[RMDB]
RNA sequence: GGGAACGACUCGAGUAGAGUCGAAAAUGAUAUCUACCCAUUUUUCUGUCAUCCCUAUAGUUCACUUUGUAUUAAAUUGGGUUUCAUUUGGGAUUUGCAAUGUAAAUACGUAUUUCUAGUUUUCAUAUAAAGUAGUUCUUUUAUAACAAAUGAAAAGCAACGCUAAGCAUUUCGAUGCUUAGCGUUGAAAAGAAACAACAACAACAAC
Reactivity to 2A3 in 0.01 (KOAc 150mM, MgCl2 10mM, bicine 150mM(pH8.5), 24C), signal-to-noise 1, nucleotides 027 to 156: u070g000a000u030a130u140c100u030a010c000c000c000a000u120u100u040u020u040c180u190g060u070c020a030u000c050c060c020u050a070u070a220g050u070u100c020a000c030u040u120u130g000u020a050u060u030a090a030a090u100u020g100g030g030u000u000u070c030a120u010u070u150g180g000g070a020u040u040u040g100c000a000a150u140g030u140a000a020a070u030a000c030g120u140a090u150u160u100c050u050a070g000u090u010u000u070c000a010u110a020u070a080a110a040g020u000a040g040u150u160c000u100u130u090u020a290u040a300a050c070a020a040a040u100g000a120a000a080a000g020
Source information: Structure probing data (2A3) for a 207-nucleotide construct. The reactions ran in a buffer of 150 mM KOAc, 10 mM MgCl2 and 150 mM bicine (pH 8.5), at 24 C. Values cover nucleotides 27 to 156. 2A3 adducts were read by reverse transcription with SuperScript II with manganese.